An RNA of 177 nucleotides, treated with DMS and 2A3 and read out base by base. Values cover nucleotides 27 to 126. For 2A3 the reverse transcriptase was SuperScript II with manganese. The reactions ran in a buffer of 150 mM KOAc, 10 mM MgCl2 and 150 mM bicine (pH 8.5), at 24 C. For 2A3, 3,747 sequencing reads were counted.
RNA sequence: GGGAACGACUCGAGUAGAGUCGAAAAGAUAUGGACCGUGAGGAGCGAUGAGUAUUCCCUCGGAAACGAGGGAUACGAGCUCCCACGGUCCUAAGUCAAAACGCUGACUUGUUCGCAAGUCAGCGAAGUCUAAGGGGUAGUUCGCUACCCCUUAGACAAAAGAAACAACAACAACAAC
Reactivity to DMS in 0.01 (KOAc 150mM, MgCl2 10mM, bicine 150mM(pH8.5), 24C), signal-to-noise 2, nucleotides 027 to 126: g000a010u010a020u010g000g010a020c010c000g010u000g010a200g050g010a010g040c000g030a180u020g000a040g000u000a020u010u000c010c000c000u000c000g020g000a000a010a020c000g010a000g010g000g010a000u000a000c010g000a020g000c000u010c000c000c000a000c000g000g000u000c000c000u000a000a060g000u000c010a150a060a130a290c030g010c000u010g000a010c000u000u000g010u000u010c280g030c020a000a000g000u000c000a010g040c010g010a010a050
Reactivity to 2A3 in 0.01 (KOAc 150mM, MgCl2 10mM, bicine 150mM(pH8.5), 24C), signal-to-noise 1, nucleotides 027 to 126: g010a000u000a000u020g000g000a020c010c010g000u000g040a300g030g010a010g000c000g130a300u270g000a110g000u000a010u170u300c040c000c000u010c000g000g000a000a000a000c000g000a010g000g040g000a010u000a000c010g000a010g000c000u000c000c000c000a010c000g000g010u020c000c000u000a000a000g000u000c000a000a000a010a030c020g040c010u000g000a020c010u010u030g000u130u070c120g040c170a000a010g020u000c000a000g000c000g010a050a020